The record gives the reactivity of an RNA of 177 nucleotides to DMS and 2A3. The reactions ran in a buffer of 150 mM KOAc, 10 mM MgCl2 and 150 mM bicine (pH 8.5), at 24 C. The 2A3 profile rests on 1,619 reads. 2A3 is a SHAPE reagent: it acylates the 2'-hydroxyl of flexible nucleotides of all four kinds. The DMS profile rests on 4,515 reads.
RNA sequence: GGGAACGACUCGAGUAGAGUCGAAAAAAGGUGCCUUCAUAUCGGUUAAGAACUCUUAACUCUGAUGGCUUUCGAGUUAUGUGGUGCAUUGAAGCUCUCCCUUCAAAUGGUCGUACAGUUCCGUGAAAAUCGGGAUAUCAUUCGUGAUAUCCCGAUUAAAAGAAACAACAACAACAAC
Reactivity to DMS in 0.01 (KOAc 150mM, MgCl2 10mM, bicine 150mM(pH8.5), 24C), signal-to-noise 4, nucleotides 027 to 126: a060a040g010g020u000g000c050c010u000u000c020a050u010a090u000c090g020g000u000u010a030a080g010a180a110c300u000c010u000u000a010a010c010u000c050u010g010a030u000g010g010c080u000u000u000c050g010a050g010u000u000a050u000g010u010g010g020u010g000c040a090u000u000g000a070a070g000c080u010c040u010c030c050c020u000u000c070a030a070a060u000g010g000u000c030g000u010a050c130a080g000u000u000c010c010g010u000g000a070a050
Reactivity to 2A3 in 0.01 (KOAc 150mM, MgCl2 10mM, bicine 150mM(pH8.5), 24C), signal-to-noise 1, nucleotides 027 to 126: a060a000g040g000u020g000c030c000u060u010c050a050u060a110u200c040g030g000u030u010a060a020g090a210a170c050u010c010u220u000a010a010c000u000c040u170g050a040u070g020g020c000u020u040u040c040g020a000g000u080u070a070u070g050u070g030g030u020g000c010a010u000u070g040a050a040g040c010u000c000u020c010c000c000u010u000c020a060a080a040u100g050g020u000c020g010u010a010c020a050g010u070u000c020c000g030u070g080a140a130